Source: RMDB library M2RFPK, as collected in RNAgym. Structure probing data (2A3 and DMS) for a 207-nucleotide construct. For DMS the reverse transcriptase was MarathonRT. For 2A3 the reverse transcriptase was SuperScript II with manganese. The reactions ran in a buffer of 150 mM KOAc, 10 mM MgCl2 and 150 mM bicine (pH 8.5), at 24 C.
RNA sequence: GGGAACGACUCGAGUAGAGUCGAAAAAUGCACCAGCAGUAGGACUCAGCGACCGUCACAACAAGGUUGUGCUGGUAUCCGACGGUCGUAUAGCCCUGUCUUGCAGGUUGCCUUGCACUGACGUGCCACACCAUUUACAGAUUCGUCUGUAAAUGAAACCACGUUCAUACUUCGGUAUGAACGUGGUAAAAGAAACAACAACAACAAC
Reactivity to 2A3 in 0.01 (KOAc 150mM, MgCl2 10mM, bicine 150mM(pH8.5), 24C), signal-to-noise 4, nucleotides 027 to 156: a000u060g000c010a000c000c000a000g000c000a000g000u100a020g000g020a050c010u040c080a020g000c010g000a000c030c000g000u050c010a050c030a130a100c040a200a140g110g030u040u040g070u090g050c060u070g070g020u050a070u020c020c050g000a000c000g000g000u010c000g010u060a080u050a070g000c010c010c010u020g060u090c050u050u120g010c020a030g020g000u120u150g030c020c020u060u100g000c010a020c020u190g070a050c060g020u010g020c040c020a050c020a040c020c010a010u000u000u000a010c000a000g010a040u030u080c130g070u000c090u010g000u000a000a010a000u000g010a100a010
Reactivity to DMS in 0.01 (KOAc 150mM, MgCl2 10mM, bicine 150mM(pH8.5), 24C), signal-to-noise 1, nucleotides 027 to 156: a080u000g020c030a140c000c070a080g040c020a020g050u000a030g020g010a010c020u010c210a300g010c000g010a000c000c060g000u000c020a220c080a060a030c090a020a130g050g000u000u000g020u010g000c030u000g010g000u000a110u000c100c120g020a060c010g030g020u000c000g000u020a100u000a020g030c000c020c020u000g000u020c050u010u000g030c000a080g000g000u000u000g020c010c140u000u000g010c020a110c030u030g040a230c170g020u000g040c000c040a110c050a150c110c000a010u010u000u010a000c020a000g000a050u000u010c300g040u000c010u010g010u000a000a000a000u000g020a040a180